[RMDB]
RNA sequence: GGGAACGACUCGAGUAGAGUCGAAAAUCAUGAGUCCAAUGAGGCUGGCGUGGAAAACGGCGUCUUUUCCUUUUUUUCUUACUGGCAGAAGCUUCAGGGGGAUGAGUAUCGACGGCAGGAGAACUGCUCAUAUGUAGGCGUUCGCGCCUACAUAUGAAAAAGAAACAACAACAACAAC
Reactivity to DMS in 0.01 (KOAc 150mM, MgCl2 10mM, bicine 150mM(pH8.5), 24C), signal-to-noise 3, nucleotides 027 to 126: u010c060a070u010g010a160g010u010c030c030a110a080u010g020a060g000g020c060u000g000g000c050g020u000g000g010a030a050a070a090c200g000g000c100g010u010c040u010u020u000u000c010c000u000u010u010u010u010u000u010c050u010u020a080c090u000g030g000c050a060g000a110a070g010c030u000u000c050a040g010g000g010g000g000a060u010g000a070g010u010a100u000c080g010a100c120g010g000c030a040g000g010a150g010a070a160c040u010g000c080
Reactivity to 2A3 in 0.01 (KOAc 150mM, MgCl2 10mM, bicine 150mM(pH8.5), 24C), signal-to-noise 2, nucleotides 027 to 126: u140c030a040u070g080a020g080u050c030c040a040a140u080g020a010g010g050c030u050g000g110c030g090u050g000g030a010a010a030a080c030g080g040c010g040u060c000u040u090u060u100c000c000u130u100u000u040u020u090u060c040u080u110a100c030u060g070g000c030a040g030a180a020g030c000u090u070c100a060g120g000g000g000g010a000u070g050a000g030u040a090u170c060g030a000c050g040g030c000a010g020g020a060g020a090a000c010u010g030c000